RNA sequence: GGGAACGACUCGAGUAGAGUCGAAAAAUAUUAUCGCAUACGCUAUGCGAUAAUAGCGUAUCGCUAUAUACGCUAUCGCGCGAUAUAUGCGCGCAUAAUAGCGUAUGCGUAUCGCAUAUAUGCGGCGCGCGGAUUGUUGAUUCGUCAACAAUCCGCGAAAAGAAACAACAACAACAAC
Reactivity to 2A3 in 0.01 (KOAc 150mM, MgCl2 10mM, bicine 150mM(pH8.5), 24C), signal-to-noise 2, nucleotides 027 to 126: a010u250a070u110u080a080u080c000g030c000a000u000a050c000g030c060u040a010u040g000c040g050a000u120a050a020u000a010g070c020g010u000a010u060c070g000c170u050a070u020a000u000a290c000g000c000u000a000u030c030g000c000g010c020g100a030u060a020u060a010u300g040c020g000c000g000c000a020u120a220a030u020a020g000c000g000u000a010u030g000c020g000u020a070u060c010g000c050a000u070a010u020a040u250g070c050g040g030c020g050
Reactivity to DMS in 0.01 (KOAc 150mM, MgCl2 10mM, bicine 150mM(pH8.5), 24C), signal-to-noise 1, nucleotides 027 to 126: a080u000a040u020u010a090u010c000g030c000a000u000a030c060g000c070u000a030u010g000c040g010a070u000a140a010u000a020g070c020g000u010a010u000c240g010c230u030a110u000a050u010a010c000g030c020u000a010u020c060g010c010g000c010g000a170u010a090u030a040u000g020c000g010c020g010c040a020u000a100a040u000a030g020c020g020u000a020u000g000c010g030u000a010u000c020g000c000a130u000a160u000a030u010g000c040g000g000c230g000